[RMDB]
RNA sequence: GGGAACGACUCGAGUAGAGUCGAAAAGAAAGGCGCGCCUGACAUCUAAAUGGAGUUGCCGCGAGGCCCUCUUACGUCGAGAUCCUGGCGCCUGUUGGCAGAGACGAUCGCGGUCAGUCCACAGAAAGGGUUAAGAAAUCUUCGGAUUUCUUAACCCAAAAGAAACAACAACAACAAC
Reactivity to 2A3 in 0.01 (KOAc 150mM, MgCl2 10mM, bicine 150mM(pH8.5), 24C), signal-to-noise 2, nucleotides 027 to 126: g100a050a040a000g020g000c000g000c000g000c040c050u070g020a050c020a170u050c020u130a040a240a080u100g040g000a010g050u050u110g040c010c000g000c020g030a060g000g060c000c060c050u100c070u040u140a060c070g090u030c020g040a040g000a120u070c000c000u010g000g040c040g040c000c010u020g070u090u110g010g000c020a000g000a000g000a000c020g060a040u060c030g010c010g000g000u020c000a000g020u010c010c030a010c010a040g130a020a070a000
Reactivity to DMS in 0.01 (KOAc 150mM, MgCl2 10mM, bicine 150mM(pH8.5), 24C), signal-to-noise 2, nucleotides 027 to 126: g000a090a140a080g000g030c000g040c000g030c000c000u000g010a060c090a030u040c050u020a030a110a110u040g000g010a070g010u000u010g060c040c020g030c140g010a080g000g010c010c300c000u000c030u020u000a060c130g000u020c050g000a070g000a190u030c060c060u010g000g010c020g000c040c060u040g000u000u040g000g040c120a070g040a130g010a030c060g020a080u010c030g020c040g050g000u000c050a130g010u030c010c020a030c110a040g000a080a090a110
An RNA of 177 nucleotides, treated with 2A3 and DMS and read out base by base. 2A3 adducts were read by reverse transcription with SuperScript II with manganese. The DMS profile rests on 2,863 reads.